[RMDB]
RNA sequence: GGGAACGACUCGAGUAGAGUCGAAAAUACUUAGUACGCGCGUAGUUGCAGGCAUUCCGGGUGCAGCAACUGACGCGGAAGACUUUUCCCAGAGUGUGCGCUUCAACUGGCGUGCUGAGUGGUGCACGAAUUGCACGUACGUUCGCGUACGUGCAAAGAGCUAUAGUCCUUUCGAGGACUAUAGCUCAAAAGAAACAACAACAACAAC
Reactivity to 2A3 in 0.01 (KOAc 150mM, MgCl2 10mM, bicine 150mM(pH8.5), 24C), signal-to-noise 3, nucleotides 027 to 156: u090a010c000u000u010a000g010u020a000c010g000c010g020c000g020u000a010g020u000u010g000c030a170g100g030c010a030u070u160c150c200g170g080g000u010g020c020a020g000c010a000a010c000u060g140a020c000g000c010g010g000a000a020g120a060c060u210u160u030u020c000c000c000a020g000a000g010u130g000u000g010c000g000c000u030u030c030a210a260c130u020g020g000c000g030u030g000c000u000g000a000g000u050g000g020u020g010c000a010c030g040a110a140u020u000g000c020a000c000g000u010a010c000g000u030u040c140g010c000g130u010a000c010g000u020g000c000a000a020a000
Reactivity to DMS in 0.01 (KOAc 150mM, MgCl2 10mM, bicine 150mM(pH8.5), 24C), signal-to-noise 1, nucleotides 027 to 156: u000a050c060u000u010a090g000u010a100c000g000c010g040c020g030u000a070g030u000u000g050c010a170g040g000c030a050u000u000c000c300g010g050g190u010g000c010a300g000c020a010a080c020u000g000a040c020g000c010g000g030a110a090g010a120c080u000u000u000u000c040c000c020a120g010a080g010u020g050u000g030c030g000c020u000u000c100a070a130c130u000g010g000c050g050u000g010c000u000g000a100g000u000g000g010u000g000c000a100c050g060a100a200u000u000g000c010a010c020g000u000a000c000g070u010u000c300g060c050g000u000a000c010g040u000g000c000a010a010a070
Chemical mapping of a 207-nucleotide RNA with 2A3 and DMS. DMS adducts were read by reverse transcription with MarathonRT. The reactions ran in a buffer of 150 mM KOAc, 10 mM MgCl2 and 150 mM bicine (pH 8.5), at 24 C. 2A3 adducts were read by reverse transcription with SuperScript II with manganese.